[RMDB]
Background:
Structure probing data (2A3) for a 207-nucleotide construct.

RNA sequence: GGGAACGACUCGAGUAGAGUCGAAAAUCAACUAACGAGUGCUUGGGCCUAGCGACGGCUGCCUGUGCUUCACAUUAGCCCCGCUUGCGGACGGAGAAGACAAAAGAACAUCAGCGCACCCUGGACUCCUCCCAGGAGGAGCCCCAUCGGGAGGACAGUCGCCCGGCCGCUUCGGCGGCCGGGCGACAAAAGAAACAACAACAACAAC
Reactivity to 2A3 in 0.01 (KOAc 150mM, MgCl2 10mM, bicine 150mM(pH8.5), 24C), signal-to-noise 1, nucleotides 027 to 156: u040c020a000a070c010u120a010a030c050g030a030g070u060g070c030u100u100g060g000g000c030c030u050a080g020c040g070a080c020g030g020c040u020g040c010c000u040g020u050g010c060u070u080c040a060c030a120u070u100a020g010c000c000c000c000g070c000u060u130g000c020g050g010a060c020g050g010a100g020a150a010g040a010c050a040a130a020a020g130a090a070c050a080u130c020a010g030c020g020c030a050c020c010c000u020g030g000a030c010u000c010c000u000c020c030c010a090g100g000a000g010g000a010g000c050c040c010c000a110u120c030g000g000g000a000g040g000a000c010a030
The 2A3 profile rests on 1,120 reads. The reactions ran in a buffer of 150 mM KOAc, 10 mM MgCl2 and 150 mM bicine (pH 8.5), at 24 C.